[RMDB]
RNA sequence: GGGAACGACUCGAGUAGAGUCGAAAAAGCCGUGCCGGCUACGGCCGGCACGGCACCCCUAUGAUGAGGACCUUUUCACAGACCUGUACUGAUAUAUCUGUGAGGAUAAGUAACUCUGAGGAGGCAAAUUAAUAAUUUGAUUCGUCAAAUUAUUAAUAAAAGAAACAACAACAACAAC
Reactivity to 2A3 in 0.01 (KOAc 150mM, MgCl2 10mM, bicine 150mM(pH8.5), 24C), signal-to-noise 1, nucleotides 027 to 126: a000g000c000c000g000u010g020c030c030g000g080c120u050a010c090g110g000c000c000g000g010c030a000c000g010g040c000a010c000c050c000c000u070a020u140g010a020u050g000a070g040g030a040c000c030u030u030u010u020c000a000c000a030g000a000c010c080u090g060u280a150c050u060g210a100u190a060u090a040u290c000u000g000u000g010a010g020g020a060u060a130a000g000u030a130a010c000u010c000u010g090a090g080g020a030g010g050c060a150a210
Chemical mapping of a 177-nucleotide RNA with 2A3. Values cover nucleotides 27 to 126. The RNA was probed in 150 mM KOAc, 10 mM MgCl2 and 150 mM bicine (pH 8.5) at 24 C. The data come from the RNA Mapping Database (RMDB), library RFM100.